[RMDB]
An RNA of 177 nucleotides, treated with 2A3 and DMS and read out base by base.
The RNA was probed in 150 mM KOAc, 10 mM MgCl2 and 150 mM bicine (pH 8.5) at 24 C.
It was measured as part of the RMDB library OK2TST.
2A3 is a SHAPE reagent: it acylates the 2'-hydroxyl of flexible nucleotides of all four kinds.
2A3 adducts were read by reverse transcription with SuperScript II with manganese.
Reactivities are given for positions 27 through 126.
RNA sequence: GGGAACGACUCGAGUAGAGUCGAAAAUGAUGAAGGGGUCAAUGGUCAGCAAGGGUCGACAAUGGAUUUAUGAAAGUGGUUAACCAAGAAGAGUCUUCUGAAGAUGAAGCAUCGUCUGAAAGUUCAGCAUAACUGAGCAGUUCGCUGCUCAGUUAUGAAAAGAAACAACAACAACAAC
Reactivity to 2A3 in 0.01 (KOAc 150mM, MgCl2 10mM, bicine 150mM(pH8.5), 24C), signal-to-noise 2, nucleotides 027 to 126: u100g050a040u100g050a050a030g000g000g000g020u040c010a030a080u070g000g020u030c010a010g000c020a020a060g060g000g020u050c030g010a010c020a040a010u050g030g010a020u040u120u090a130u150g100a060a030a030g040u040g030g030u050u040a030a050c020c010a010a000g010a030a010g020a030g080u010c000u050u000c010u040g060a100a050g020a080u110g000a020a000g000c020a100u050c030g040u000c030u010g060a110a050a040g050u060u060c020a030g020
Reactivity to DMS in 0.01 (KOAc 150mM, MgCl2 10mM, bicine 150mM(pH8.5), 24C), signal-to-noise 6, nucleotides 027 to 126: u010g010a090u010g010a100a080g020g010g000g020u000c050a070a080u010g000g000u000c060a050g020c100a070a110g010g010g010u000c050g010a060c080a070a100u010g010g000a110u000u000u010a060u010g010a040a070a080g010u000g000g010u000u000a060a110c080c040a070a100g000a060a070g000a070g010u000c030u000u000c020u000g010a110a080g000a090u000g000a040a060g010c080a070u000c070g010u000c020u000g000a070a070a080g010u000u000c070a070g010